An RNA of 170 nucleotides, treated with 2A3 and DMS and read out base by base. For 2A3 the reverse transcriptase was SuperScript II with manganese. DMS adducts were read by reverse transcription with MarathonRT. The 2A3 profile rests on 8,194 reads. Conditions: 150 mM KOAc, 10 mM MgCl2 and 150 mM bicine (pH 8.5), 24 C. Reactivities are given for positions 27 through 129.
RNA sequence: GGGAACGACUCGAGUAGAGUCGAAAACCAGCCAGGGGUUUUCAUCCUCAAGUUUCUUGAUCUUCUUGUUGGAUCGCCGGAGAUCCUUCUCGAGCAGUCGCCUUUUCUUCCUUUCUUCUACCCACUGUCCACUCGUCGUUCGCGACGAGUAAAAGAAACAACAACAACAAC
Reactivity to 2A3 in 0.01 (KOAc 150mM, MgCl2 10mM, bicine 150mM(pH8.5), 24C), signal-to-noise 2, nucleotides 027 to 129: c010c000a010g070c030c030a010g020g010g000g000u060u060u060u080c050a100u100c020c010u070c020a020a030g030u030u080u020c020u050u120g080a080u010c020u090u000c020u060u080g050u010u020g020g010a020u030c030g040c040c050g060g010a050g020a040u020c040c000u020u010c040u020c030g040a000g000c020a040g080u060c010g070c000c000u040u050u060u040c020u040u090c010c000u040u080u000c010u050u000c020u050a100c020c010c010a020c050u040g070u000c010c010
Reactivity to DMS in 0.01 (KOAc 150mM, MgCl2 10mM, bicine 150mM(pH8.5), 24C), signal-to-noise 4, nucleotides 027 to 129: c000c020a060g030c120c050a000g000g000g000g000u000u030u080u040c090a160u010c040c030u010c150a090a120g020u010u050u030c040u040u050g020a090u040c000u000u020c040u050u040g020u000u000g010g040a080u010c050g040c140c050g050g020a010g020a070u000c060c010u000u020c070u040c000g050a120g000c120a060g050u020c070g010c050c030u030u050u030u030c030u020u020c030c010u000u000u000c050u050u000c060u040a140c010c010c040a090c000u020g030u050c000c060